Chemical mapping of a 177-nucleotide RNA with DMS. Source: RMDB library OK2TST, as collected in RNAgym. The RNA was probed in 150 mM KOAc, 10 mM MgCl2 and 150 mM bicine (pH 8.5) at 24 C. DMS (dimethyl sulfate) methylates the pairing face of unpaired adenines and cytosines.

RNA sequence: GGGAACGACUCGAGUAGAGUCGAAAAGUCAAGAUCGCCUGCCUGUAAUGCCGCCUCCAUGCGCGCCGUCGUCGGCCCGACGCCGGUGCCGCUUACAUUGCCCGCAACGGGCCUGACGCUGACCAGACUAUCACGAGGACUUCGGUCCUCGUGAUAGAAAAGAAACAACAACAACAAC
Reactivity to DMS in 0.01 (KOAc 150mM, MgCl2 10mM, bicine 150mM(pH8.5), 24C), signal-to-noise 1, nucleotides 027 to 126: g000u010c090a060a070g010a040u000c050g010c060c020u000g020c010c000u000g030u020a070a060u020g000c040c060g010c000c030u010c070c040a120u020g000c020g000c030g040c000c000g000u000c000g030u000c020g020g070c060c080c030g010a040c110g000c010c020g020g030u000g010c170c080g050c040u020u000a030c220a060u000u010g010c020c020c020g020c180a050a140c080g030g010g010c000c020u000g010a020c070g000c120u000g000a110c050c110a110g000a250